The record gives the reactivity of an RNA of 177 nucleotides to DMS and 2A3. DMS adducts were read by reverse transcription with MarathonRT. Conditions: 150 mM KOAc, 10 mM MgCl2 and 150 mM bicine (pH 8.5), 24 C. The DMS profile rests on 1,104 reads.

[RMDB]
RNA sequence: GGGAACGACUCGAGUAGAGUCGAAAACGCCGACCUUCACGGGCCGCUCGGUGAGCAGGAUCAGCCCGGACACGAAGUUCUUCACGAUCUCCUGCAGGCCGAAGCCGAUGCCCACCGACAGCGCGCAAGCAGCUAGCGUAUUCGUACGCUAGCUGCUAAAAGAAACAACAACAACAAC
Reactivity to DMS in 0.01 (KOAc 150mM, MgCl2 10mM, bicine 150mM(pH8.5), 24C), signal-to-noise 2, nucleotides 027 to 126: c130g020c010c020g000a060c090c020u010u000c110a070c170g010g030g000c020c030g020c010u000c010g010g000u000g030a300g000c020a050g020g000a030u000c050a140g000c130c090c160g000g000a050c010a130c200g000a130a210g020u000u000c000u010u000c120a160c080g020a100u000c100u010c010c020u000g000c040a090g000g000c000c000g020a030a050g010c050c000g010a060u030g000c000c010c010a060c130c110g000a050c110a080g000c050g040c080g020c190a110
Reactivity to 2A3 in 0.01 (KOAc 150mM, MgCl2 10mM, bicine 150mM(pH8.5), 24C), signal-to-noise 1, nucleotides 027 to 126: c020g010c030c020g030a080c010c050u130u100c110a040c090g050g000g000c010c000g010c010u000c020g010g010u050g080a010g000c030a010g000g050a040u060c010a020g060c040c030c000g000g010a090c110a040c070g300a160a000g020u030u010c000u120u090c070a030c050g000a040u000c100u040c090c000u000g000c010a030g060g120c020c000g040a040a010g000c030c010g060a130u140g040c000c010c040a030c010c000g050a030c010a050g030c050g020c030g000c100a110